RNA sequence: GGGAACGACUCGAGUAGAGUCGAAAACGUAAGGUGAAAUAGUAUUGUAUUUUCGAACCUUCGAUUUGCAUUCGAUGGAUAUAGAAAUAGCGAUUGAACUAGGUGCAUGCCUGAAAUGUAGCCAUUCGGCGUAAUAUCCAUUCGUGGAUAUUACGCCAAAAGAAACAACAACAACAAC
Reactivity to 2A3 in 0.01 (KOAc 150mM, MgCl2 10mM, bicine 150mM(pH8.5), 24C), signal-to-noise 3, nucleotides 027 to 126: c030g010u070a060a050g000g010u000g040a040a030a120u080a060g080u070a040u090u100g040u020a100u030u050u010u030c050g030a090a080c010c000u030u000c000g030a030u020u030u270g080c090a070u030u020c000g010a020u040g020g040a030u030a010u030a190g060a020a020a020u060a050g060c020g050a030u040u100g060a040a020c020u010a060g010g030u040g010c040a050u180g020c000c010u030g020a030a070a010u100g000u070a020g040c030c010a040u150u150c080
Reactivity to DMS in 0.01 (KOAc 150mM, MgCl2 10mM, bicine 150mM(pH8.5), 24C), signal-to-noise 5, nucleotides 027 to 126: c070g010u010a080a070g000g010u010g000a080a120a090u000a060g010u000a060u010u020g010u000a080u000u000u010u000c020g020a110a140c020c000u000u000c000g010a020u000u010u020g010c220a140u010u000c040g020a010u000g010g010a080u010a060u010a140g000a010a010a030u000a220g000c030g010a020u000u000g000a060a070c070u000a010g010g020u000g020c160a060u000g000c010c020u000g010a020a040a070u000g010u000a120g010c020c030a120u010u000c170